[RMDB]
RNA sequence: GGGAACGACUCGAGUAGAGUCGAAAAAGCGCGCAAUGUGUACAUGGGUAUUCCCCCAUAUCUGUGUACUAUAGCUGAGAGGACUUGCUUUUUGGGGGAUGCAGUGCAAGUUUGGGUGGUGCGCGAAGUGUAUAUAAUUAUUCGUAAUUAUAUACACAAAAGAAACAACAACAACAAC
Reactivity to DMS in 0.01 (KOAc 150mM, MgCl2 10mM, bicine 150mM(pH8.5), 24C), signal-to-noise 8, nucleotides 027 to 126: a120g010c010g020c000g010c010a150a100u030g010u000g020u000a000c000a010u000g000g000g000u000a010u010u000c000c000c000c000c010a170u000a000u000c000u000g020u000g000u000a000c000u030a100u040a170g010c110u020g000a020g000a010g000g000a000c000u000u000g000c000u000u000u000u000u000g000g000g000g000g000a020u020g010c200a110g010u010g000c000a010a010g000u000u010u000g000g000g000u030g000g010u010g000c000g000c010g000a030a090
Reactivity to 2A3 in 0.01 (KOAc 150mM, MgCl2 10mM, bicine 150mM(pH8.5), 24C), signal-to-noise 8, nucleotides 027 to 126: a000g050c020g010c000g000c020a040a100u140g060u020g000u060a000c000a010u030g020g000g000u020a030u030u050c000c000c000c000c000a000u000a010u010c010u000g010u000g010u020a000c010u090a040u180a080g060c080u080g030a010g010a010g060g000a000c000u000u000g010c010u020u030u000u020u020g000g000g000g000g010a010u040g070c090a020g080u050g040c000a000a000g000u010u030u050g030g000g030u240g040g010u030g010c010g000c010g040a100a040
This 177-nucleotide RNA was probed chemically with DMS and 2A3. For 2A3 the reverse transcriptase was SuperScript II with manganese. The RNA was probed in 150 mM KOAc, 10 mM MgCl2 and 150 mM bicine (pH 8.5) at 24 C. For DMS, 56,499 sequencing reads were counted. Reactivities are given for positions 27 through 126. The data come from the RNA Mapping Database (RMDB), library OK1LIB. For DMS the reverse transcriptase was MarathonRT.